[RMDB]
Structure probing data (2A3 and DMS) for a 177-nucleotide construct. Values cover nucleotides 27 to 126. The data come from the RNA Mapping Database (RMDB), library OK1LIB. Conditions: 150 mM KOAc, 10 mM MgCl2 and 150 mM bicine (pH 8.5), 24 C. For 2A3 the reverse transcriptase was SuperScript II with manganese.
RNA sequence: GGGAACGACUCGAGUAGAGUCGAAAAGCAAUCGCCGGAAGAGACGGAUGCGGCAUCGCAAAGCCUGUCUCGGCUCUGGGGUUACGACCUCGCCUCGCUAAAGCGUUUUGCCGCCAGACUCGAACACGAUCAGUAUGCGGUUCGCCGCAUACUGAUCAAAAGAAACAACAACAACAAC
Reactivity to 2A3 in 0.01 (KOAc 150mM, MgCl2 10mM, bicine 150mM(pH8.5), 24C), signal-to-noise 5, nucleotides 027 to 126: g040c020a010a070u100c050g030c020c010g050g040a090a030g030a080g010a060c020g050g020a030u130g010c020g010g040c030a070u100c030g020c060a090a030a060g020c050c040u100g050u070c080u060c090g010g000c000u030c040u100g010g000g000g020u050u040a060c170g050a030c010c000u010c040g040c000c000u030c020g000c090u120a080a070a100g020c000g020u050u030u060u110g020c010c010g000c000c020a050g030a140c020u020c040g020a100a040c080a010c170
Reactivity to DMS in 0.01 (KOAc 150mM, MgCl2 10mM, bicine 150mM(pH8.5), 24C), signal-to-noise 2, nucleotides 027 to 126: g000c100a070a030u000c040g030c020c000g000g080a100a290g040a080g000a000c100g000g030a120u000g000c000g000g000c000a090u010c060g000c070a040a300a130g030c040c020u050g050u010c040u030c100g020g000c020u000c010u070g000g040g030g000u020u070a070c130g000a110c000c020u000c010g000c020c020u040c050g000c080u050a040a210a050g010c010g020u000u000u000u070g020c010c000g020c030c040a080g040a090c000u010c100g010a080a090c160a220c220